This 177-nucleotide RNA was probed chemically with 2A3 and DMS. Conditions: 150 mM KOAc, 10 mM MgCl2 and 150 mM bicine (pH 8.5), 24 C. For DMS, 1,002 sequencing reads were counted. Values are in units of 0.01, from 0 to 300, in steps of 10. The data come from the RNA Mapping Database (RMDB), library TTRDEL.
[RMDB]
RNA sequence: GGGAACGACUCGAGUAGAGUCGAAAAGAUAUGGAGUAUUAGAGGAGGUAUAGCUGAUCGGAAACGAUACCAGCUGCGAACUCUAUACUCCUAAGUCGAGAGGGAGUGCACUUCGGUGCACUCCCAAGAUACCAGCUUUCUUCGGAAAGCUGGUAUCAAAAGAAACAACAACAACAAC
Reactivity to 2A3 in 0.01 (KOAc 150mM, MgCl2 10mM, bicine 150mM(pH8.5), 24C), signal-to-noise 1, nucleotides 027 to 126: g000a000u060a050u060g020g000a010g000u040a100u300u260a100g060a030g130g050a110g060g150u300a190u080a230g020c030u010g000a010u010c010g000g030a020a010a000c000g000a000u000a180c140c040a010g000c000u000g040c060g060a010a010c010u000c010u010a050u000a000c000u030c000c000u000a020a020g020u010c020g060a000g040a220g250g060g020a000g000u010g040c000a000c040u080u160c300g170g000u000g030c010a000c000u040c000c020c000a000a000
Reactivity to DMS in 0.01 (KOAc 150mM, MgCl2 10mM, bicine 150mM(pH8.5), 24C), signal-to-noise 1, nucleotides 027 to 126: g010a000u000a300u010g000g000a000g010u000a010u010u010a020g000a020g000g000a140g000g030u000a080u010a040g000c000u010g000a050u000c010g000g000a120a090a080c000g000a000u010a130c250c030a010g000c000u010g000c100g000a100a160c000u000c010u000a010u000a000c010u000c000c000u000a010a060g000u000c000g000a060g000a230g020g000g000a020g000u010g010c000a010c000u000u020c240g020g000u000g000c000a000c000u000c010c000c000a000a000